[RMDB]
Chemical mapping of a 207-nucleotide RNA with 2A3.
RNA sequence: GGGAACGACUCGAGUAGAGUCGAAAAACUGAUACCUUACGAGGUAUCAGAAUGACUUCGUGGUAGAGCGCCACGAACGGAAAAUAAAGAAUGCUCGAUUGAAACGCACCGUGUACGCACGGUGCGAAAAAGUCGAUCCAGUUCGCUGGAUCGACAAGCCAUGAUACAGGUUCGCCUGUAUCAUGGCAAAAGAAACAACAACAACAAC
Reactivity to 2A3 in 0.01 (KOAc 150mM, MgCl2 10mM, bicine 150mM(pH8.5), 24C), signal-to-noise 1, nucleotides 027 to 156: a000c000u000g000a010u000a000c000c000u060u100a130c300g070a070g010g000u000a000u020c000a010g000a030a030u100g050a060c060u010u000c000g000u000g000g030u010a100g030a000g060c000g020c010c000a000c000g000a030a040c040g100g040a030a010a000a000u030a000a010a020g180a050a020u020g010c000u000c000g110a150u060u300g020a100a080a000c010g000c010a000c010c010g000u000g020u020a010c190g000c120a000c000g030g000u000g000c000g000a000a000a000a000a000g010u000c030g000a000u000c000c010a010g000u060u090c120g070c150u030g020g010a000u000c000g000a010c000a000a000